Conditions: 150 mM KOAc, 10 mM MgCl2 and 150 mM bicine (pH 8.5), 24 C. Structure probing data (2A3) for a 207-nucleotide construct. As a SHAPE reagent, 2A3 marks flexible, mostly unpaired nucleotides at the ribose 2'-OH.
RNA sequence: GGGAACGACUCGAGUAGAGUCGAAAAGAAAGAAAGAAGCGAGCUGGCGCAGCCGCACGGGCUACCGUCAAUCCAGCACUUCACAAGUCUUGUCGUUCUGACAGGACAUCCAUCAACCCACCGGGAAAAAAGGACUACAGCUUCGGCUGUAGUCCAAGUAAUAUAUCCGGUUCGCCGGAUAUAUUACAAAAGAAACAACAACAACAAC
Reactivity to 2A3 in 0.01 (KOAc 150mM, MgCl2 10mM, bicine 150mM(pH8.5), 24C), signal-to-noise 2, nucleotides 027 to 156: g030a000a020a000g040a010a080a010g000a020a010g020c070g070a030g000c040u020g050g000c030g020c080a020g060c040c050g130c070a060c090g080g000g020c020u100a100c050c040g060u090c040a010a080u050c000c010a020g020c030a040c000u080u050c030a070c050a180a050g000u000c020u020u010g000u010c000g050u180u170c150u220g000a000c000a000g010g000a010c010a000u030c020c010a030u030c040a020a150c000c000c040a040c040c120g040g060g000a130a080a000a000a040a000g020g000a030c000u010a000c000a000g030c020u020u100c210g110g000c010u010g000u000a000g000u000c000c000a010a000